Overview
Chemical mapping of a 177-nucleotide RNA with DMS and 2A3. For DMS, 1,057 sequencing reads were counted. For 2A3 the reverse transcriptase was SuperScript II with manganese. Values are in units of 0.01, from 0 to 300, in steps of 10.
RNA sequence: GGGAACGACUCGAGUAGAGUCGAAAAGAGAACCCAACCUACAUUUACCACUCCGCAUUCAUUGAGUGUGGAAGUUGUGGUAAUGAUUCCUGGCUUACAGGGAAUGCUAUCCAAGGGUUUGCCUGUGGUGUGCAACAAAGUUCGCUUUGUUGCACACAAAAGAAACAACAACAACAAC
Reactivity to DMS in 0.01 (KOAc 150mM, MgCl2 10mM, bicine 150mM(pH8.5), 24C), signal-to-noise 2, nucleotides 027 to 126: g000a150g020a050a080c010c000c000a070a100c140c070u000a110c030a020u000u000u000a000c010c000a010c010u000c000c000g010c000a010u000u000c050a240u000u010g030a000g020u000g030u000g000g020a060a160g020u010u000g000u000g010g000u000a010a010u000g000a210u000u000c010c010u000g020g000c170u000u020a070c080a060g000g000g000a030a030u010g000c120u000a040u000c180c150a110a180g000g000g000u000u000u000g000c000c000u000g000u000g010
Reactivity to 2A3 in 0.01 (KOAc 150mM, MgCl2 10mM, bicine 150mM(pH8.5), 24C), signal-to-noise 2, nucleotides 027 to 126: g020a010g000a010a020c000c010c040a010a040c020c030u090a060c040a110u040u070u040a010c000c010a000c010u020c010c000g000c010a000u010u000c030a050u140u300g020a000g020u040g010u010g000g020a030a040g130u150u180g000u000g000g000u040a020a000u030g050a000u020u010c000c020u020g080g000c030u120u190a050c030a020g000g010g030a040a020u110g070c060u070a060u120c080c070a050a070g000g010g020u030u030u000g080c020c000u050g000u070g080